Conditions: 150 mM KOAc, 10 mM MgCl2 and 150 mM bicine (pH 8.5), 24 C.
This 177-nucleotide RNA was probed chemically with 2A3 and DMS.
The data come from the RNA Mapping Database (RMDB), libraries RFM100 and RFMREP.
RNA sequence: GGGAACGACUCGAGUAGAGUCGAAAAAUAAACCGAAUAACUCGUCGUAGUCAAGCAUUGCUUGAGGUGGCACAGGGAAGAGCUGUGGUGGCUCAGUUCGUAAAGCUACACCUGGAGAACUUUGAUUGCAUUUUCUAAUAUUCGUAUUAGAAAAUGCAAAAGAAACAACAACAACAAC
Reactivity to 2A3 in 0.01 (KOAc 150mM, MgCl2 10mM, bicine 150mM(pH8.5), 24C), signal-to-noise 8, nucleotides 027 to 126: a000u240a030a050a010c030c030g030a060a080u130a150a030c030u020c050g060u020c040g030u070a030g070u080c020a050a010g020c090a230u030u300g010c030u040u050g020a030g040g080u060g020g010c030a020c060a060g060g010g040a090a070g020a050g040c020u040g000u070g090g180u060g030g000c000u000c030a010g010u040u040c030g060u110a090a030a030g000c010u030a020c010a020c030c020u050g040g010a040g020a030a050c000u080u090u080g080a100u020u040
Reactivity to DMS in 0.01 (KOAc 150mM, MgCl2 10mM, bicine 150mM(pH8.5), 24C), signal-to-noise 4, nucleotides 027 to 126: a080u010a050a110a150c040c040g010a090a090u040a120a080c040u000c030g020u010c050g010u000a060g010u000c030a060a080g010c030a120u010u040g010c000u000u010g020a060g000g010u000g000g010c020a040c090a070g000g000g020a090a060g010a060g000c030u000g010u000g010g010u010g010g000c020u010c030a050g000u000u000c040g010u020a080a090a090g010c050u000a050c030a050c050c040u000g010g010a150g000a060a060c110u000u000u010g010a250u000u000